Notes
The record gives the reactivity of an RNA of 177 nucleotides to 2A3 and DMS. The reactions ran in a buffer of 150 mM KOAc, 10 mM MgCl2 and 150 mM bicine (pH 8.5), at 24 C. The 2A3 profile rests on 1,212 reads. Source: RMDB library OK2TST, as collected in RNAgym. DMS adducts were read by reverse transcription with MarathonRT. In probing experiments dimethyl sulfate is read out at A N1 and C N3, which are open when not base-paired.

RNA sequence: GGGAACGACUCGAGUAGAGUCGAAAAUAUUGCUUUGGAGGGCACCCCCAAUGGAACUCUGUAAAGCUCAGACUUCGGCCCUUCCUGCUCGGGGGGGUGUUCAAGGCAACAGGGAACCAGCCGCCCAAGUCUCCUUAUGAUUCGUCAUAAGGAGACUAAAAGAAACAACAACAACAAC
Reactivity to 2A3 in 0.01 (KOAc 150mM, MgCl2 10mM, bicine 150mM(pH8.5), 24C), signal-to-noise 2, nucleotides 027 to 126: u080a040u050u050g010c020u080u050u160g170g110a170g030g060g030c020a030c010c060c000c010c010a010a070u020g010g020a030a030c000u000c020u070g020u130a100a150a090g020c040u060c110a030g040a100c020u140u020c140g100g040c000c000c000u030u040c010c000u060g150c050u070c160g000g020g000g000g020g040g040u060g040u070u040c040a000a000g000g000c000a020a010c010a010g010g000g010a010a040c010c000a060g080c050c040g010c030c000c000a010
Reactivity to DMS in 0.01 (KOAc 150mM, MgCl2 10mM, bicine 150mM(pH8.5), 24C), signal-to-noise 2, nucleotides 027 to 126: u020a070u010u000g010c050u010u000u020g010g020a170g000g010g050c030a090c050c050c010c000c020a110a150u010g000g010a030a280c000u000c010u020g000u020a090a110a110g010c070u000c090a200g000a040c240u010u000c170g020g010c010c000c010u000u000c010c000u010g010c210u000c220g010g020g010g000g000g040g010u000g040u010u010c050a050a130g010g020c010a050a020c030a040g000g000g000a030a220c020c030a100g020c100c090g010c010c000c010a080